[RMDB]
Chemical mapping of a 177-nucleotide RNA with DMS. Conditions: 150 mM KOAc, 10 mM MgCl2 and 150 mM bicine (pH 8.5), 24 C. Reactivities are given for positions 27 through 126. For DMS, 1,261 sequencing reads were counted. The data come from the RNA Mapping Database (RMDB), library TTRDEL.
RNA sequence: GGGAACGACUCGAGUAGAGUCGAAAAGAUAUGGACAUGACCUCAGGCGAAGAACUCGGAAACGAGGGAGCCUAAGGUAUGUCCUAAGUCAAAGAUACCUAGGAGGCUUCGGCCUCCUAGGUAUCAAGUGGGUAUAAACGUUCGCGUUUAUACCCACAAAAGAAACAACAACAACAAC
Reactivity to DMS in 0.01 (KOAc 150mM, MgCl2 10mM, bicine 150mM(pH8.5), 24C), signal-to-noise 2, nucleotides 027 to 126: g000a050u020a300u010g010g000a010c000a000u020g010a000c010c020u000c060a010g000g020c010g000a090a160g000a090a140c010u000c000g000g000a120a080a270c000g010a020g000g010g020a060g020c000c000u000a030a000g000g020u000a000u000g000u010c000c000u000a000a090g030u000c040a140a110a170g020a010u000a000c000c000u000a000g010g000a030g020g010c020u000u000c220g030g020c010c000u000c000c000u000a000g000g010u000a000u000c000a020a050